[RMDB]
RNA sequence: GGGAACGACUCGAGUAGAGUCGAAAACUACAGGCACGUACCACCACGCGCGGCUAAUUUUUUUGCAUUUUUAGUAGAGACAGGGUUUCACCGCGUUAGCCAGGAUGGUCUUGUCUUGAUCUCCUGAUCUUCCCCAUGGAUUCGUCCAUGGGGAAGAAAAAGAAACAACAACAACAAC
Reactivity to DMS in 0.01 (KOAc 150mM, MgCl2 10mM, bicine 150mM(pH8.5), 24C), signal-to-noise 2, nucleotides 027 to 126: c100u010a080c140a030g010g020c040a040c040g010u000a060c030c020a040c010c030a050c080g010c060g000c070g010g010c070u000a000a000u000u000u000u000u010u020u020g020c070a060u000u000u010u000u000a080g020u000a040g020a090g010a060c120a040g010g010g010u010u000u010c090a180c030c030g020c050g000u000u010a070g030c130c080a080g020g010a060u000g010g010u000c010u000u000g020u020c070u000u000g030a080u000c060u010c010c020u000g010a110
Reactivity to 2A3 in 0.01 (KOAc 150mM, MgCl2 10mM, bicine 150mM(pH8.5), 24C), signal-to-noise 1, nucleotides 027 to 126: c030u100a040c020a030g030g000c000a000c040g040u080a050c000c020a000c040c020a000c050g070c030g000c000g000g030c050u080a060a040u000u010u050u020u040u090u080g040c020a090u020u000u030u150u210a070g040u050a010g040a000g020a050c010a030g150g060g010u060u100u120c030a010c040c010g000c010g050u040u090a030g040c040c030a010g010g010a130u060g000g020u030c050u040u010g040u020c000u020u040g040a060u020c030u050c000c000u010g040a070